RNA sequence: GGGAACGACUCGAGUAGAGUCGAAAAAUCAAUCAGGUAAACAAUACAUUCACCUGUCUUUAUCCCGAGAUGGUACUAAUGUACUCUGACAUGCUAGAAGGGAGGAGUGCUACAGCAAUGUUUACCCGUUCGGCUGCAUAUUCGUAUGCAGCCGAACAAAAGAAACAACAACAACAAC
Reactivity to DMS in 0.01 (KOAc 150mM, MgCl2 10mM, bicine 150mM(pH8.5), 24C), signal-to-noise 1, nucleotides 027 to 126: a120u010c100a050a080u000c160a020g000g000u000a000a020a020c010a050a180u020a040c120a110u020u020c220a020c250c010u000g000u000c020u000u020u000a260u000c000c000c000g000a020g000a030u000g000g000u000a110c040u000a090a100u010g000u040a040c050u000c040u000g010a300c020a110u000g000c110u000a080g000a130a200g000g000g010a300g000g000a010g000u000g020c020u010a100c240a030g000c080a070a040u000g000u010u000u000a030c020c000c110
Reactivity to 2A3 in 0.01 (KOAc 150mM, MgCl2 10mM, bicine 150mM(pH8.5), 24C), signal-to-noise 1, nucleotides 027 to 126: a000u080c050a000a050u050c000a030g010g000u020a060a000a000c020a060a150u090a120c020a080u090u120c020a000c030c000u080g040u150c020u000u110u080a190u000c040c000c020g030a030g000a010u030g000g020u040a020c030u100a040a030u100g020u050a020c010u030c030u080g050a020c050a030u120g080c030u100a010g070a180a210g100g000g010a010g000g000a010g000u030g040c070u030a040c000a050g120c040a020a090u020g010u000u060u000a030c000c030c000

The data come from the RNA Mapping Database (RMDB), library OK2TRN. The record gives the reactivity of an RNA of 177 nucleotides to DMS and 2A3. Conditions: 150 mM KOAc, 10 mM MgCl2 and 150 mM bicine (pH 8.5), 24 C. For DMS, 579 sequencing reads were counted.